[RMDB]
RNA sequence: GGGAACGACUCGAGUAGAGUCGAAAAACGCGGAGUACGCUCCGCGACAACACUUCUUUCGACCCGCUAACCGAGACCUAUGGGUCGUUAAAUUACGUCUCUAUCUUCCUCACAUAACAUCGCACAAAAAACGUGGUUCGGUUCGCCGAACCACGAACAGAUAUGGGAGGUUCGCCUCCCAUAUCUGAAAAGAAACAACAACAACAAC
Reactivity to 2A3 in 0.01 (KOAc 150mM, MgCl2 10mM, bicine 150mM(pH8.5), 24C), signal-to-noise 1, nucleotides 027 to 156: a000c030g000c010g000g000a000g010u060a020c130g020c070u000c000c000g000c000g110a000c020a070a000c060a020c040u130u160c070u030u180u140c040g020a000c000c000c000g020c110u110a050a000c010c060g030a010g020a060c000c000u040a090u200g000g000g020u010c000g050u010u030a000a080a030u130u030a010c020g040u030c030u010c050u040a050u050c080u170u070c000c060u060c000a050c030a180u120a030a060c020a120u140c060g030c100a110c110a100a070a000a030a060a020c130g010u000g000g000u000u010c000g000g010u000u010c110g010c110c000g000a000a000c010c000a000c010g000a000a000

The record gives the reactivity of an RNA of 207 nucleotides to 2A3. For 2A3, 628 sequencing reads were counted. The data come from the RNA Mapping Database (RMDB), library M2RFPK. For 2A3 the reverse transcriptase was SuperScript II with manganese. Reactivities are given for positions 27 through 156.